[RMDB]
RNA sequence: GGGAACGACUCGAGUAGAGUCGAAAAUAACUACCAGUGAUUGAUGGAUCAAUAGUCGUAGUCAUGGAACCGUAACAGUGACCUCGUGGGUAAUUCCUCCUCAAGAUUGGCUGUCCGCUUUUCCUGGGAGGGUCAAGAUGGAUGCCGGAUGGGUCUGCUAUCCGGCUAGUUUCGACUAGCCGGAUAGAAAAGAAACAACAACAACAAC
Reactivity to DMS in 0.01 (KOAc 150mM, MgCl2 10mM, bicine 150mM(pH8.5), 24C), signal-to-noise 2, nucleotides 027 to 156: u000a070a150c020u000a060c030c020a260g040u000g010a050u000u000g020a110u000g030g010a130u000c020a080a070u010a070g010u000c080g000u000a050g010u010c030a070u000g010g010a090a130c000c030g030u010a080a080c100a120g000u010g010a050c020c020u010c070g010u000g020g020g020u000a050a110u010u000c000c000u000c000c010u000c040a060a030g010a060u000u000g010g010c020u000g000u000c170c150g000c040u000u000u000u010c040c020u010g020g020g010a090g010g020g010u000c070a000a070g010a180u000g020g010a120u010g020c010c010g020g030a110u010g010g000g030u010c010u000g000
Reactivity to 2A3 in 0.01 (KOAc 150mM, MgCl2 10mM, bicine 150mM(pH8.5), 24C), signal-to-noise 3, nucleotides 027 to 156: u080a010a030c040u040a060c010c020a040g060u010g080a040u050u050g020a040u130g090g040a050u050c050a090a130u120a120g060u060c040g060u040a020g010u010c020a090u060g050g060a090a060c060c010g020u050a060a040c020a100g070u030g040a020c010c000u060c050g040u110g070g000g010u040a070a090u100u050c020c000u020c000c000u110c040a020a030g030a080u040u070g040g010c050u090g170u140c020c020g040c020u010u030u040u000c010c010u000g000g040g010a050g010g000g020u040c010a020a010g040a040u130g050g000a030u050g060c010c010g030g030a050u040g020g000g040u000c010u000g000